[RMDB]
RNA sequence: GGGAACGACUCGAGUAGAGUCGAAAAUGUGCGCAUGGAGGCUUGCCGCACAGAGUACCACCAGACGCUGCAGGCGGCUGUAGAGGAGUCUCUGGUGGAUGCGACUGAGCUGAUGGAGAAGCAUGCCGAGAGAAUAGUCUUUCGAGACUAUUCUCUCAAAAGAAACAACAACAACAAC
Reactivity to DMS in 0.01 (KOAc 150mM, MgCl2 10mM, bicine 150mM(pH8.5), 24C), signal-to-noise 6, nucleotides 027 to 126: u010g020u010g010c080g020c050a060u000g010g010a140g010g010c040u000u000g020c070c060g010c020a080c080a030g000a260g010u000a170c010c010a080c030c020a020g010a040c110g010c020u010g020c060a070g000g010c210g010g020c020u000g000u000a030g010a090g010g010a140g000u000c130u000c010u000g000g020u010g010g000a090u010g010c040g000a100c040u010g000a070g000c020u000g010a110u000g010g010a100g000a110a120g000c050a030u000g010c080c120
Reactivity to 2A3 in 0.01 (KOAc 150mM, MgCl2 10mM, bicine 150mM(pH8.5), 24C), signal-to-noise 4, nucleotides 027 to 126: u090g020u040g000c050g010c050a030u070g130g070a060g060g060c020u040u030g010c030c040g000c030a010c020a010g060a010g010u040a050c010c010a010c000c000a000g010a030c020g010c050u060g010c030a050g080g090c130g130g030c040u040g010u060a040g020a080g120g120a080g080u050c030u000c010u090g030g000u010g010g030a020u060g010c020g110a190c050u070g000a010g040c010u050g040a100u140g110g030a080g020a080a020g020c030a020u070g070c000c080
Overview
Structure probing data (DMS and 2A3) for a 177-nucleotide construct. The DMS profile rests on 7,069 reads. Reactivities are given for positions 27 through 126. 2A3 adducts were read by reverse transcription with SuperScript II with manganese. The RNA was probed in 150 mM KOAc, 10 mM MgCl2 and 150 mM bicine (pH 8.5) at 24 C.